Conditions: 150 mM KOAc, 10 mM MgCl2 and 150 mM bicine (pH 8.5), 24 C. The record gives the reactivity of an RNA of 207 nucleotides to DMS and 2A3. 2A3 is a SHAPE reagent: it acylates the 2'-hydroxyl of flexible nucleotides of all four kinds.
[RMDB]
RNA sequence: GGGAACGACUCGAGUAGAGUCGAAAAUAUUAGUUCGCUAAUACUGUCGAUAUGGACGUACCUGGAGCGAUAAGGAUGUGGGAUCGGAAACGAUCCCACAACAAGUCCUUUUGACGCUCCCUGUACGUCCUAAGUCUAUUCUGACCUUCGGGUCAAAUUAAUUUGAACAUUUCGAUGUUCAAAUUAAAAAAGAAACAACAACAACAAC
Reactivity to DMS in 0.01 (KOAc 150mM, MgCl2 10mM, bicine 150mM(pH8.5), 24C), signal-to-noise 3, nucleotides 027 to 156: u000a010u000u000a010g010u000u010c290g040c020u000a030a010u000a030c040u010g000u000c020g020a080u000a150u000g010g020a040c030g040u000a010c000c040u000g010g030a020g030c010g000a180u010a030a030g010g020a180u000g050u000g010g020g000a010u000c000g020g010a130a140a270c010g030a020u000c000c000c000a010c020a010a030c080a070a190g010u000c000c010u000u000u010u010g020a230c050g020c010u010c000c000c020u000g020u000a020c010g020u000c000c000u000a010a030g010u010c030u000a150u000u000c090u000g000a040c010c030u000u010c200g050g020g010u000c010a010a020a070
Reactivity to 2A3 in 0.01 (KOAc 150mM, MgCl2 10mM, bicine 150mM(pH8.5), 24C), signal-to-noise 3, nucleotides 027 to 156: u120a030u060u050a010g030u050u070c170g000c070u050a020a030u050a110c130u160g120u260c120g010a020u020a060u200g000g020a000c000g000u000a000c000c040u000g000g000a000g020c020g040a040u030a060a000g040g000a020u140g010u000g010g000g000a010u010c000g020g000a060a030a030c000g000a000u000c030c000c000a000c020a010a010c020a040a020g050u010c000c000u010u040u030u070g100a080c000g010c010u000c000c000c000u000g000u000a000c000g000u010c000c000u000a000a000g000u000c000u010a100u140u090c090u080g010a010c010c000u040u070c240g130g000g000u010c000a010a000a000
2A3 adducts were read by reverse transcription with SuperScript II with manganese. Values cover nucleotides 27 to 156.